[RMDB]
RNA sequence: GGGAACGACUCGAGUAGAGUCGAAAAUGUUACAUUGUGCUAAUUUCAAUGUAUUGUUUGCUAUGACCAUGCCUAAGACUUGUUUCGGACCCAUAGUCCGAAAGAUCUUUGUUGAUGGCGUGCCAUUAUAGGUGGCCCUUCGGGGCCACCAAAAGAAACAACAACAACAAC
Reactivity to 2A3 in 0.01 (KOAc 150mM, MgCl2 10mM, bicine 150mM(pH8.5), 24C), signal-to-noise 2, nucleotides 027 to 129: u060g000u000u000a000c000a000u000u000g040u010g090c070u190a150a000u000u160u060c010a000a000u000g000u000a000u000u060g020u020u150u080g090c000u070a090u080g000a010c000c000a000u020g000c000c000u010a080a000g000a020c000u080u140g050u030u000u020c000g000g020a030c000c000c230a250u100a050g040u000c000c000g000a000a000a000g090a000u050c110u000u070u290g000u000u010g080a090u090g000g000c000g000u020g020c000c000a030u000u000a070u080a040
Reactivity to DMS in 0.01 (KOAc 150mM, MgCl2 10mM, bicine 150mM(pH8.5), 24C), signal-to-noise 3, nucleotides 027 to 129: u010g110u090u000a000c030a000u000u000g000u000g000c160u060a120a060u070u050u000c010a040a020u000g000u020a000u080u000g000u000u000u000g050c030u060a030u090g010a060c180c000a050u010g010c100c020u000a000a300g000a060c020u040u020g010u140u140u130c000g000g050a090c040c170c190a080u020a300g020u020c000c050g020a000a000a140g000a140u030c090u050u000u060g060u000u000g000a200u060g000g010c010g050u000g000c070c010a060u020u040a050u000a000